This 207-nucleotide RNA was probed chemically with 2A3. 2A3 adducts were read by reverse transcription with SuperScript II with manganese.

RNA sequence: GGGAACGACUCGAGUAGAGUCGAAAAGUAACACAAGCGGAUUAAAUCGUUAAACACAGCCACCUAACGUUAUCUAUUGCGAUUUACAAUUAGUUUUGCCAGUUUACGCACUCUCCUUUGAAUAUGAUAACACAGAAAUUAACACUACUUACAGUGAAUCGACCGUCCUGUUCGCAGGACGGUCGAUAAAAGAAACAACAACAACAAC
Reactivity to 2A3 in 0.01 (KOAc 150mM, MgCl2 10mM, bicine 150mM(pH8.5), 24C), signal-to-noise 1, nucleotides 027 to 156: g070u100a110a030c020a000c010a120a090g070c070g030g000a010u140u190a030a000a040u090c070g010u000u050a090a020a000c120a000c020a070g050c010c010a060c000c020u020a000a010c050g000u000u050a020u080c070u050a100u090u270g010c000g010a000u000u080u000a020c000a030a060u040u000a080g160u000u000u000u180g010c000c000a000g020u030u120u050a040c040g020c000a050c030u160c000u000c020c010u190u040u150g000a010a010u040a030u170g100a010u070a050a020c040a000c020a090g100a030a160a110u160u180a070a070c000a000c000u170a000c040u110u200a100c010a020g010u000g100a020